[RMDB]
RNA sequence: GGGAACGACUCGAGUAGAGUCGAAAAAGAGUUGCAGGAAGGUGUAGAAGAAAACAUCCGCUUUGCCCGUCAGAUUGAUGAGGCGAAGAAAGCAGCAACCGAGCCGUAUCUGGUGGAAGCACAUAUAUCAUGGAAAAUAGUUCGCUAUUUUCCAUGAAAAAGAAACAACAACAACAAC
Reactivity to 2A3 in 0.01 (KOAc 150mM, MgCl2 10mM, bicine 150mM(pH8.5), 24C), signal-to-noise 5, nucleotides 027 to 126: a010g080a000g010u040u020g000c020a010g070g070a120a020g000g070u020g020u110a110g070a300a010g050a020a130a000a010c010a010u030c000c000g000c010u020u000u000g000c000c010c000g000u000c010a080g110a300u280u260g000a000u020g030a060g070g010c020g010a000a000g000a030a020a000g030c060a010g000c000a010a010c020c040g010a010g020c010c010g040u070a120u110c060u090g030g030u040g030g050a040a020g050c110a010c020a100u180a000u030a010
Reactivity to DMS in 0.01 (KOAc 150mM, MgCl2 10mM, bicine 150mM(pH8.5), 24C), signal-to-noise 7, nucleotides 027 to 126: a090g010a120g020u000u010g010c020a120g010g000a120a080g010g010u000g010u000a070g010a150a130g000a130a070a090a050c050a030u000c030c060g000c000u000u010u000g000c010c000c000g010u000c000a100g010a200u010u000g000a010u000g010a170g010g000c000g010a010a000g010a060a050a080g010c070a070g000c030a040a060c030c010g010a080g020c010c030g010u000a070u000c020u000g010g020u000g000g000a100a100g000c060a060c080a070u010a090u010a110
Annotation: An RNA of 177 nucleotides, treated with 2A3 and DMS and read out base by base. DMS adducts were read by reverse transcription with MarathonRT. It was measured as part of the RMDB library OK2TST.